RNA sequence: GGGAACGACUCGAGUAGAGUCGAAAAACAACUACACCGAGGAAGAUGUCACUACUCUUCAGAAGGAUCUCGCUGAGCUAUGUAAAUUUGCUAUAUUUGGUAGAGAGACAUGUCCUAACACUGGAACACCAGAUGUCAUGUUCGCAUGACAUCUGGUAAAAGAAACAACAACAACAAC
Reactivity to DMS in 0.01 (KOAc 150mM, MgCl2 10mM, bicine 150mM(pH8.5), 24C), signal-to-noise 2, nucleotides 027 to 126: a090c110a080a090c100u010a130c130a050c110c030g020a070g000g010a010a050g030a070u000g000u000c040a100c110u000a040c080u000c080u000u000c060a050g010a130a060g000g000a110u010c020u000c060g010c050u000g000a010g040c030u000a020u010g010u000a050a060a140u010u010u000g020c020u000a050u010a110u000u000u000g010g010u000a020g000a050g010a120g010a030c080a030u000g000u000c030c020u000a110a050c160a030c160u000g000g020a100a130c140
Reactivity to 2A3 in 0.01 (KOAc 150mM, MgCl2 10mM, bicine 150mM(pH8.5), 24C), signal-to-noise 2, nucleotides 027 to 126: a000c020a040a020c040u150a030c080a050c030c040g000a040g020g000a050a040g050a100u090g070u070c000a010c110u140a020c020u090c010u140u080c030a020g030a050a020g140g050a050u000c030u020c040g000c040u070g040a020g000c050u020a050u110g050u110a050a150a270u090u120u100g000c010u090a060u030a090u240u120u090g090g010u120a070g000a040g000a030g000a060c030a040u050g050u000c000c000u020a130a010c060a060c080u060g020g070a050a030c000

The data come from the RNA Mapping Database (RMDB), library OK2TRN. This 177-nucleotide RNA was probed chemically with DMS and 2A3. Conditions: 150 mM KOAc, 10 mM MgCl2 and 150 mM bicine (pH 8.5), 24 C. For 2A3, 1,363 sequencing reads were counted.